[RMDB]
RNA sequence: GGGAACGACUCGAGUAGAGUCGAAAAGAAUUGCCAGGACGACCGGGUCCUUUCUUGGAUCAACCCGCUCAAUGCCUGGAGAUUUGGGCGUGCCCCCGCAAGACUGCUAGCCGAGUAGUGUUGGGUCGCGAAAGGCCUUGUGGUACUGCCUGAUAGGGAAGUCAUCUAGGUUCGCCUAGAUGACUUCAAAAGAAACAACAACAACAAC
Reactivity to 2A3 in 0.01 (KOAc 150mM, MgCl2 10mM, bicine 150mM(pH8.5), 24C), signal-to-noise 1, nucleotides 027 to 156: g010a010a060u130u090g050c000c000a000g000g010a040c010g050a010c040c000g020g010g000u080c000c000u070u150u080c120u120u140g070g000a050u070c050a000a050c020c000c000g000c000u000c010a100a100u290g030c000c000u000g000g000a010g000a000u050u000u030g000g000g010c050g000u000g010c060c000c000c000c000g000c020a020a000g100a060c070u080g030c040u050a030g000c000c000g000a000g000u000a000g000u030g120u140u170g130g010g170u140c010g000c010g000a020a040a020g000g000c020c010u000u010g010u020g000g000u000a000c010u120g030c030c000u040g040a100u170a080g200g000
Reactivity to DMS in 0.01 (KOAc 150mM, MgCl2 10mM, bicine 150mM(pH8.5), 24C), signal-to-noise 1, nucleotides 027 to 156: g000a030a000u000u010g010c020c020a030g000g050a150c180g000a010c030c100g020g010g020u000c000c000u020u000u000c110u000u020g030g010a040u010c040a120a020c020c020c010g000c040u000c000a130a100u010g020c000c000u050g010g000a030g000a050u010u010u000g020g020g000c030g010u010g010c020c020c000c010c060g040c020a020a050g000a050c030u000g020c060u000a120g020c020c060g000a190g020u000a080g030u010g030u000u020g000g000g000u000c040g000c060g000a150a160a200g050g010c000c060u000u000g020u000g020g010u000a070c020u040g000c020c040u000g000a120u010a190g000g000
Chemical mapping of a 207-nucleotide RNA with 2A3 and DMS. For DMS the reverse transcriptase was MarathonRT. It was measured as part of the RMDB library PDB130.